[RMDB]
RNA sequence: GGGAACGACUCGAGUAGAGUCGAAAAUGUGUCUCAGAUCAACACCAAUAAAGCUUCCAAUUACUUUCCACUCGUCCCCAUCACUUACAGAAUGCGGCGAGCUUCUUGACGUGGAACAGACUGGAAAACGGCUAUUAACUUUCGAGUUAAUAGCCGUAAAAGAAACAACAACAACAAC
Reactivity to DMS in 0.01 (KOAc 150mM, MgCl2 10mM, bicine 150mM(pH8.5), 24C), signal-to-noise 3, nucleotides 027 to 126: u040g010u000g010u000c030u000c030a050g000a070u000c120a100a100c070a100c070c070a080a040u020a090a050a120g010c080u000u010c000c030a010a050u000u020a090c030u020u000u000c000c020a060c030u000c030g010u000c010c000c010c030a150u010c040a080c120u000u050a090c220a060g000a040a010u050g000c260g010g030c120g010a100g030c050u000u000c060u000u010g010a100c150g050u000g000g000a050a010c070a010g000a030c110u000g000g010a030a060a060
Reactivity to 2A3 in 0.01 (KOAc 150mM, MgCl2 10mM, bicine 150mM(pH8.5), 24C), signal-to-noise 5, nucleotides 027 to 126: u120g040u010g030u020c010u010c080a070g030a090u090c020a070a060c020a030c040c020a050a100u130a230a120a000g050c080u060u010c010c010a050a050u100u090a110c030u020u030u010c030c020a040c020u030c020g070u140c020c020c010c000a010u060c030a030c050u050u180a050c000a100g100a110a060u130g020c040g060g000c070g040a040g030c010u050u030c010u020u100g030a040c050g020u020g000g010a030a030c040a060g070a050c040u030g030g000a020a070a050